[RMDB]
RNA sequence: GGGAACGACUCGAGUAGAGUCGAAAACCGUAGGUUGGUUGUCAGAGAAGGAUAAGGUCAACAGCUCGCUUUCGAAAGAGAGCGAGACAUGACCGUAACUUCUCUUGGAUUUACCAACCUAAACGGAAAGAUACCCAUCGUUCGCGAUGGGUAUCAAGGUACUACAAGUGUUCGCACUUGUAGUACCAAAAGAAACAACAACAACAAC
Reactivity to DMS in 0.01 (KOAc 150mM, MgCl2 10mM, bicine 150mM(pH8.5), 24C), signal-to-noise 1, nucleotides 027 to 156: c000c010g050u000a000g010g030u000u000g000g010u000u000g000u000c000a080g010a040g000a040a010g030g050a110u000a140a270g000g000u000c000a010a100c080a080g020c000u000c000g010c020u000u000u010c000g020a280a160a270g000a020g010a010g000c010g040a010g000a000c110a240u000g000a050c010c010g000u000a070a300c020u000u000c060u000c020u000u000g010g020a110u020u020u000a020c000c000a010a020c000c000u000a000a020a050c050g010g020a110a090a070g020a020u000a000c000c000c020a000u000c020g050u000u000c300g040c030g010a030u000g020g020g050u000a000u000c000a050a100
Reactivity to 2A3 in 0.01 (KOAc 150mM, MgCl2 10mM, bicine 150mM(pH8.5), 24C), signal-to-noise 3, nucleotides 027 to 156: c010c000g030u020a000g010g000u000u000g010g010u010u020g010u010c010a000g000a000g010a000a020g030g010a010u020a010a030g010g010u010c020a040a040c040a220g020c000u010c000g010c000u000u000u000c010g070a050a090a040g000a010g000a000g000c000g000a000g030a020c000a050u060g000a000c000c000g000u000a010a010c010u010u000c000u000c010u000u060g010g000a000u060u090u250a010c000c000a000a000c000c000u000a020a050a010c020g030g040a160a060a050g000a010u000a010c000c020c000a000u000c000g050u060u060c300g000c010g130a020u000g000g000g000u010a010u000c010a000a000